RNA sequence: GGGAACGACUCGAGUAGAGUCGAAAAGAUAUGGAUCCCUGAAGCGACGAUCUAUUAGUUUCGGAAACGAAACAUAGGGAGCUUCUGGGAUCCUAAGUCAAAACGUGGAUUCUUCGGAAUCCACGAACGUUAUAGAUCAGUUCGCUGAUCUAUAACGAAAAGAAACAACAACAACAAC
Reactivity to DMS in 0.01 (KOAc 150mM, MgCl2 10mM, bicine 150mM(pH8.5), 24C), signal-to-noise 6, nucleotides 027 to 126: g000a010u000a040u010g000g000a010u000c000c000c000u000g010a010a010g030c000g000a090c300g000a030u010c000u000a010u000u010a160g010u000u000u000c000g020g000a010a010a020c000g000a010a010a010c010a010u000a000g000g000g000a010g010c000u000u000c000u000g000g000g010a000u000c000c000u000a000a060g000u000c000a120a060a110a250c020g020u000g000g000a010u000u000c000u000u010c230g030g000a010a010u000c000c000a000c000g000a020a050
Reactivity to 2A3 in 0.01 (KOAc 150mM, MgCl2 10mM, bicine 150mM(pH8.5), 24C), signal-to-noise 6, nucleotides 027 to 126: g000a000u010a000u040g010g000a000u000c000c010c000u000g020a000a000g000c000g300a300c020g000a100u010c010u010a020u060u140a080g010u010u000u000c000g000g000a010a010a010c000g000a000a000a000c010a000u010a000g000g010g020a020g000c000u000u000c000u000g000g000g000a000u000c000c000u000a000a000g000u000c000a000a030a090a130c020g000u000g000g000a010u010u000c010u050u070c300g140g020a000a000u000c000c000a000c000g000a030a010

Structure probing data (DMS and 2A3) for a 177-nucleotide construct. The reactions ran in a buffer of 150 mM KOAc, 10 mM MgCl2 and 150 mM bicine (pH 8.5), at 24 C.